This 177-nucleotide RNA was probed chemically with DMS and 2A3. For DMS, 9,114 sequencing reads were counted. DMS adducts were read by reverse transcription with MarathonRT. Source: RMDB library OK1LIB, as collected in RNAgym. The 2A3 profile rests on 4,236 reads. High 2A3 reactivity points to a flexible backbone, as in loops and unpaired stretches.

[RMDB]
RNA sequence: GGGAACGACUCGAGUAGAGUCGAAAAGCUGCACGCAAGUGACGGGAGUGAUGGCGAUGAUGAUGACUGGCCGUGUGCUGCUGGUGUGUGCUCUCUGCGUGCUGUAUUGCGGUGCCGGCUGUGGUGCACCCAGCUGGCUAUUCGUAGCCAGCUGGGUAAAAGAAACAACAACAACAAC
Reactivity to DMS in 0.01 (KOAc 150mM, MgCl2 10mM, bicine 150mM(pH8.5), 24C), signal-to-noise 3, nucleotides 027 to 126: g020c020u000g000c010a020c030g010c040a050a090g000u040g010a120c130g000g000g000a060g030u010g020a100u020g010g010c040g030a060u030g000a090u000g020a070u010g010a060c080u010g000g030c020c050g010u030g010u020g020c030u010g010c020u020g020g010u010g000u020g000u020g000c030u000c040u000c060u010g000c010g000u000g010c000u000g000u010a070u020u020g010c050g000g030u020g010c040c020g010g000c040u010g000u010g000g000u020g020c090
Reactivity to 2A3 in 0.01 (KOAc 150mM, MgCl2 10mM, bicine 150mM(pH8.5), 24C), signal-to-noise 5, nucleotides 027 to 126: g050c040u020g010c020a010c010g010c030a060a110g070u060g130a110c060g020g030g010a050g020u100g050a120u110g030g040c060g060a110u080g020a030u050g010a020u100g050a100c040u070g030g000c000c010g120u150g050u060g080c030u020g010c020u050g040g040u070g020u030g020u060g050c020u000c010u000c030u050g000c010g020u020g010c000u010g030u070a110u050u180g030c030g000g000u020g000c010c000g040g000c020u050g070u090g070g050u080g010c010